RNA sequence: GGGAACGACUCGAGUAGAGUCGAAAAACACCUUGCGCGCUGUACAGCUCACGGCCCUGAUGGUCCAUCCGAGUAGUUAGGGACUGCUCUGAGAACGUGCUCUUGGGGCAGAGUAGACCUCAUCACAGGAACCACUAAGCUACUUCAACCUCCGCAAGGUAGCCGCGCCGUUCGCGGCGCGGCUACCAAAAGAAACAACAACAACAAC
Reactivity to 2A3 in 0.01 (KOAc 150mM, MgCl2 10mM, bicine 150mM(pH8.5), 24C), signal-to-noise 1, nucleotides 027 to 156: a100c030a030c000c030u000u040g030c020g010c000g020c020u060g000u060a030c020a070g060c050u040c030a040c020g070g000c030c000c000u090g000a100u150g010g110u040c040c000a050u040c020c000g000a010g050u070a030g030u050u140a040g010g020g050a040c000u000g000c010u000c030u050g010a000g040a150a070c110g100u130g040c040u010c000u050u010g000g020g040g000c000a010g000a000g020u060a070g030a080c000c000u020c070a120u110c000a150c030a000g040g020a130a070c000c000a000c100u070a080a000g030c020u070a050c000u130u090c020a050a040c040c030u120c040c000g070c030a000a070